RNA sequence: GGGAACGACUCGAGUAGAGUCGAAAACAUGGAUCGUUCGCGAUCCAUGGCAGGUGGUGGUGGGACCAGCCCACCCAGGCUUUUGGCAUCCCAGCCUUUCCAAUCCAGCCUAUUUCGAUAGGCUGAAACAAGAGACAUAGUUCGCUAUGUCUCUUGUAAAAGAAACAACAACAACAAC
Reactivity to 2A3 in 0.01 (KOAc 150mM, MgCl2 10mM, bicine 150mM(pH8.5), 24C), signal-to-noise 5, nucleotides 027 to 126: c000a000u010g000g000a010u010c010g000u100u050c240g000c010g110a000u000c010c000a000u010g000g010c050a030g010g090u110g020g060u130g020g040u020g010g040g030a070c040c050a030g170c010c000c010a020c000c010c010a030g090g060c040u120u140u280u280g020g000c010a050u060c000c000c000a000g000c000c030u030u030u000c030c020a030a030u040c020c010a000g000c000c000u010a020u020u120u060c110g070a010u010a000g000g000c010u000g010a010a020
Reactivity to DMS in 0.01 (KOAc 150mM, MgCl2 10mM, bicine 150mM(pH8.5), 24C), signal-to-noise 9, nucleotides 027 to 126: c010a000u000g000g000a000u000c000g020u000u000c200g040c010g010a010u000c000c000a000u000g010g020c200a070g010g010u010g010g030u000g020g030u000g000g010g010a170c150c250a130g000c030c010c020a050c050c020c040a070g010g000c050u000u000u010u010g010g010c030a070u000c010c010c010a160g000c030c010u000u000u000c020c040a130a170u020c130c000a010g000c000c000u000a010u000u000u010c170g010a010u000a000g000g010c000u000g000a030a070
This 177-nucleotide RNA was probed chemically with 2A3 and DMS. In probing experiments dimethyl sulfate is read out at A N1 and C N3, which are open when not base-paired. For 2A3 the reverse transcriptase was SuperScript II with manganese. Values cover nucleotides 27 to 126. For 2A3, 13,537 sequencing reads were counted. Conditions: 150 mM KOAc, 10 mM MgCl2 and 150 mM bicine (pH 8.5), 24 C.